[RMDB]
RNA sequence: GGGAACGACUCGAGUAGAGUCGAAAAUGAGAAUACUUUUAGUACAAGCGAGUACACGCAGUAUACUGCCACUUGUGUGAGAAUACUUUUAGUACAAGCGAGUACACGCAGUAUACUGCCACUUGUGGUCACUCCCAAGAUUCGUCUUGGGAGUGACAAAAGAAACAACAACAACAAC
Reactivity to DMS in 0.01 (KOAc 150mM, MgCl2 10mM, bicine 150mM(pH8.5), 24C), signal-to-noise 2, nucleotides 027 to 126: u000g020a040g000a000a020u000a000c010u000u000u000u000a070g020u000a050c150a010a030g080c020g000a140g000u000a050c160a250c300g010c020a000g040u030a000u000a020c000u060g020c000c250a000c020u000u000g030u050g060u000g000a110g000a180a240u000a000c050u000u000u000u000a090g000u000a000c060a210a300g000c020g000a080g040u100a050c100a280c300g000c100a040g000u000a000u000a030c000u000g100c050c070a000c010u000u000g000u000g010
Reactivity to 2A3 in 0.01 (KOAc 150mM, MgCl2 10mM, bicine 150mM(pH8.5), 24C), signal-to-noise 4, nucleotides 027 to 126: u260g050a010g100a110a020u170a160c040u080u120u140u150a100g060u160a080c020a130a000g020c030g040a010g050u080a040c030a010c100g010c000a000g000u010a000u000a000c000u000g000c000c010a020c000u010u020g010u030g030u070g070a110g070a140a040u020a060c000u160u140u140u190a020g000u010a020c030a100a000g010c010g010a010g020u090a050c030a000c100g000c010a000g000u010a000u000a000c000u000g000c000c000a000c000u000u000g010u020g070
Structure probing data (DMS and 2A3) for a 177-nucleotide construct. For 2A3, 2,414 sequencing reads were counted. Source: RMDB library OK1LIB, as collected in RNAgym.